[RMDB]
RNA sequence: GGGAACGACUCGAGUAGAGUCGAAAAUUAGAUGUUGCUGAUCGCCAAGAUAACGAUAAACGCCGUACACCUAAUGGCAGAGCACAAGAAACAAUUAAUGUCAAUCUGCGCGCAUAAGCAGAACUUGCGGUGUCGGGUUAUUCGUAACCCGACACCGAAAAGAAACAACAACAACAAC
Reactivity to 2A3 in 0.01 (KOAc 150mM, MgCl2 10mM, bicine 150mM(pH8.5), 24C), signal-to-noise 1, nucleotides 027 to 126: u150u020a030g000a300u010g010u100u140g020c000u100g070a230u000c000g140c050c000a000a000g210a300u020a090a120c040g040a000u000a000a220a000c010g000c080c000g000u000a060c260a000c000c090u210a300a210u000g040g000c000a060g000a060g000c000a020c020a060a100g000a020a000a180c020a020a020u080u140a110a040u170g030u180c000a000a040u070c000u000g000c000g000c000g000c000a140u050a130a090g000c050a000g050a030a110c170u030u300g000